[RMDB]
RNA sequence: GGGAACGACUCGAGUAGAGUCGAAAAUAUUGGUAAUGAAGUGGAAAUUGUAUCGAAAGAUGAAAUGAAUAAAGUAAUUAUCAUUAAACGUAAUGAUAAUGUAAUUAUUGUCAGUUACGAAAAUGCACUAUUAACACACUUUCGAGUGUGUUAAUAGAAAAGAAACAACAACAACAAC
Reactivity to DMS in 0.01 (KOAc 150mM, MgCl2 10mM, bicine 150mM(pH8.5), 24C), signal-to-noise 7, nucleotides 027 to 126: u050a050u010u010g010g010u010a030a020u010g000a110a160g010u020g010g020a120a100a050u010u020g010u030a040u000c020g000a100a080a110g000a020u000g010a070a040a020u000g000a110a210u020a060a050a050g010u020a100a010u010u000a020u000c000a000u010u010a040a070a170c060g020u000a000a010u000g000a010u000a000a000u010g000u000a090a070u050u070a020u010u000g000u000c010a020g020u010u010a000c020g020a060a050a080a080u030g010c200a150
Reactivity to 2A3 in 0.01 (KOAc 150mM, MgCl2 10mM, bicine 150mM(pH8.5), 24C), signal-to-noise 8, nucleotides 027 to 126: u140a010u030u050g010g010u050a030a050u050g040a080a020g080u080g120g100a040a100a170u150u130g100u060a030u080c040g030a060a070a050g070a040u110g070a030a070a040u110g070a040a080u170a140a070a010g020u020a010a040u010u020a010u040c000a010u010u110a110a170a070c030g010u020a010a010u010g000a000u000a010a000u020g040u110a070a110u180u200a010u000u010g010u010c010a060g130u050u030a030c020g060a090a050a000a050u120g060c050a000
The record gives the reactivity of an RNA of 177 nucleotides to DMS and 2A3. Conditions: 150 mM KOAc, 10 mM MgCl2 and 150 mM bicine (pH 8.5), 24 C. Source: RMDB library OK1LIB, as collected in RNAgym. High DMS reactivity at an A or C suggests that its Watson-Crick edge is free.